[RMDB]
RNA sequence: GGGAACGACUCGAGUAGAGUCGAAAAAGUAGGACGUCUGUCCUCCUACGGAUGCCCAGGUCGGACCGCGGGGAGGUGGAGAUGCCAUGCCGACCCGAAGAGGAAAGAAGAACACGGACGCGAACCCAUAGGCGCAGGUUCGCCUGCGCCAAAAGAAACAACAACAACAAC
Reactivity to DMS in 0.01 (KOAc 150mM, MgCl2 10mM, bicine 150mM(pH8.5), 24C), signal-to-noise 2, nucleotides 027 to 129: a050g040u050a070g030g010a020c010g040u030c150u070g000u070c000c040u000c010c010u000a040c170g000g030a000u000g040c140c000c000a150g000g000u030c000g060g000a000c130c050g000c120g010g000g060g030a100g020g030u030g000g000a040g000a080u060g030c100c060a110u060g030c040c040g020a160c030c030c040g010a000a030g010a070g010g020a030a030a030g000a030a050g040a030a060c090a090c060g000g050a070c110g010c030g030a000a000c020c010c040a120u000a140
Reactivity to 2A3 in 0.01 (KOAc 150mM, MgCl2 10mM, bicine 150mM(pH8.5), 24C), signal-to-noise 4, nucleotides 027 to 129: a000g030u020a000g010g030a000c050g130u140c180u190g030u080c020c010u010c000c010u060a050c000g040g020a020u080g020c030c000c000a020g040g070u050c020g060g000a050c010c000g030c040g030g000g000g000a010g000g000u060g010g000a120g030a040u100g010c000c000a060u150g040c000c000g050a020c020c000c010g030a020a010g040a050g010g000a050a030a000g000a000a000g000a030a000c060a000c080g000g010a030c030g000c070g030a010a060c040c000c000a050u050a110